[RMDB]
RNA sequence: GGGAACGACUCGAGUAGAGUCGAAAAAGCUGCUCGAAAUCGCGCCAAAGGACCGGCGUAGCGGGAGUGGCUAGCAGCGAGGGUUGCCACUCCAGCCGCGCUAUGCAGCAGCCAUAGCAGAUUUACACCACGAGGUGAUAUUCGUAUCACCUCGUGGAAAAGAAACAACAACAACAAC
Reactivity to 2A3 in 0.01 (KOAc 150mM, MgCl2 10mM, bicine 150mM(pH8.5), 24C), signal-to-noise 1, nucleotides 027 to 126: a000g020c010u010g000c010u040c040g050a040a100a100u130c050g040c000g030c060c000a080a050a110g200g010a040c000c110g000g000c010g000u030a010g020c040g000g010g010a000g000u020g020g020c000u030a030g030c000a020g050c000g170a120g000g120g020u070u040g020c020c000a010c010u000c020c000a010g020c000c010g050c000g000c000u010a010u070g000c010a010g020c000a010g030c000c020a040u010a040g060c020a000g030a170u120u110u080a040c110a040
Reactivity to DMS in 0.01 (KOAc 150mM, MgCl2 10mM, bicine 150mM(pH8.5), 24C), signal-to-noise 1, nucleotides 027 to 126: a060g000c020u000g000c000u000c170g030a030a070a100u000c060g020c080g000c060c010a120a100a160g020g010a130c130c060g000g010c030g000u000a030g010c020g000g000g000a040g000u010g000g000c030u000a000g020c020a050g010c050g000a120g020g060g010u000u000g020c000c070a060c000u000c000c000a010g030c040c110g020c060g030c010u000a080u010g010c120a080g020c040a060g020c020c030a040u000a040g010c040a160g020a090u000u010u000a150c190a220
Record summary
Chemical mapping of a 177-nucleotide RNA with 2A3 and DMS. The data come from the RNA Mapping Database (RMDB), library OK2TRN. Values cover nucleotides 27 to 126. For 2A3 the reverse transcriptase was SuperScript II with manganese. The reactions ran in a buffer of 150 mM KOAc, 10 mM MgCl2 and 150 mM bicine (pH 8.5), at 24 C. For DMS the reverse transcriptase was MarathonRT.